Chemical mapping of a 177-nucleotide RNA with DMS and 2A3. 2A3 adducts were read by reverse transcription with SuperScript II with manganese.
RNA sequence: GGGAACGACUCGAGUAGAGUCGAAAAGAACUGGGAGUGACCAAACAGGCCCUCUACCGAUACUUUCCCUCCAAGGAAUCGCUCUUUGAGGCCAUCCUGGUACACGCGAGGGACGUGCACGGCACACUCCUUUUCACAUAUUCGUAUGUGAAAAGGAAAAAGAAACAACAACAACAAC
Reactivity to DMS in 0.01 (KOAc 150mM, MgCl2 10mM, bicine 150mM(pH8.5), 24C), signal-to-noise 9, nucleotides 027 to 126: g010a120a110c080u010g010g010g010a120g010u000g010a130c030c030a040a120a120c140a110g000g000c040c020c010u000c030u010a080c150c010g010a100u000a080c080u000u000u000c020c010c020u000c050c100a100a050g000g010a070a070u010c160g010c130u000c040u000u010u010g010a110g000g010c060c060a070u010c020c020u000g000g010u000a050c100a060c100g000c150g000a080g010g010g010a050c170g010u010g000c040a070c130g010g010c070a080c120a080c150
Reactivity to 2A3 in 0.01 (KOAc 150mM, MgCl2 10mM, bicine 150mM(pH8.5), 24C), signal-to-noise 6, nucleotides 027 to 126: g020a050a020c070u060g010g010g050a080g060u100g040a110c050c010a080a070a070c070a090g030g030c010c050c000u000c010u040a080c030c040g030a030u030a130c040u080u110u050c010c010c010u030c020c010a050a020g030g020a110a080u080c040g030c050u050c060u100u130u190g080a140g020g000c010c000a010u040c000c010u040g010g050u090a070c090a010c090g050c040g020a050g010g010g010a000c020g010u010g000c070a050c200g050g000c040a010c010a030c050